Structure probing data (DMS and 2A3) for a 177-nucleotide construct.
For 2A3, 2,266 sequencing reads were counted.
It was measured as part of the RMDB library OK2TST.
For DMS the reverse transcriptase was MarathonRT.
[RMDB]
RNA sequence: GGGAACGACUCGAGUAGAGUCGAAAACGUCUACCGUGACACGUAUGCCGAGGUACAUGCCCAUGCGCGCGGGCACCUACACACUGUCGUCCGGUUUCGGCCCGAGGUGGGGCAGCCAGCACCGUGGACCAACGAUGACUUUCGAGUCAUCGUUGGUAAAAGAAACAACAACAACAAC
Reactivity to DMS in 0.01 (KOAc 150mM, MgCl2 10mM, bicine 150mM(pH8.5), 24C), signal-to-noise 3, nucleotides 027 to 126: c100g040u010c080u010a080c030c010g030u010g000a050c030a030c070g000u000a090u010g010c070c120g010a040g020g000u010a120c180a170u000g010c020c000c010a100u000g000c090g020c110g010c060g030g020g000c020a090c060c020u000a060c080a070c090a040c120u010g010u000c160g030u000c060c040g010g000u000u000u000c090g020g010c020c000c010g000a110g000g020u010g000g010g000g000c030a070g000c020c030a080g000c040a040c160c020g000u000g030g000
Reactivity to 2A3 in 0.01 (KOAc 150mM, MgCl2 10mM, bicine 150mM(pH8.5), 24C), signal-to-noise 2, nucleotides 027 to 126: c000g070u000c060u110a080c020c040g080u100g080a000c020a010c100g010u040a050u110g040c060c050g050a050g060g020u090a080c060a070u160g030c000c010c010a030u120g020c080g000c020g000c080g040g000g020c010a040c000c010u090a060c050a000c000a020c060u060g030u130c070g050u050c030c040g030g010u000u030u060c070g050g010c000c010c010g010a070g000g040u090g000g040g000g010c010a010g020c030c020a020g010c010a000c000c000g060u050g060g030